Conditions: 150 mM KOAc, 10 mM MgCl2 and 150 mM bicine (pH 8.5), 24 C. This 177-nucleotide RNA was probed chemically with DMS and 2A3. For 2A3, 3,749 sequencing reads were counted.
RNA sequence: GGGAACGACUCGAGUAGAGUCGAAAAAAUUUAGAUUAUCCAGGUGUAGCGGUGAAAUUCGUAGUGAUCUGGUGGAUAAUGAACCGGUGGCGAAGGCGAAAGAUAACCGCUGAAAUGCUGAAGUGAACUUGCAUUAUAUAUUCGUAUAUAAUGCAAGAAAAGAAACAACAACAACAAC
Reactivity to DMS in 0.01 (KOAc 150mM, MgCl2 10mM, bicine 150mM(pH8.5), 24C), signal-to-noise 8, nucleotides 027 to 126: a050a060u000u000u000a090g010a160u010u000a070u010c030c020a110g010g020u000g010u000a040g020c000g010g000u000g000a090a140a070u000u000c010g020u000a110g020u000g000a070u010c010u000g020g020u000g010g020a140u010a090a110u010g010a130a030c010c020g010g010u000g000g010c120g010a110a120g010g000c020g000a020a040a030g010a070u000a150a030c010c010g010c010u000g000a040a060a080u010g010c030u000g000a100a120g010u000g010a070a190
Reactivity to 2A3 in 0.01 (KOAc 150mM, MgCl2 10mM, bicine 150mM(pH8.5), 24C), signal-to-noise 3, nucleotides 027 to 126: a000a000u260u180u090a050g000a060u060u060a030u110c020c010a020g000g050u070g020u040a000g000c000g000g000u020g010a040a050a030u010u030c020g000u040a040g070u020g120a050u030c020u040g000g060u030g050g040a090u130a230a090u140g040a030a010c000c020g010g060u060g040g020c070g020a030a030g190g000c010g010a000a050a010g120a020u040a020a010c000c000g000c010u000g000a000a040a010u110g010c010u040g030a130a070g070u040g090a050a060
For 2A3 the reverse transcriptase was SuperScript II with manganese.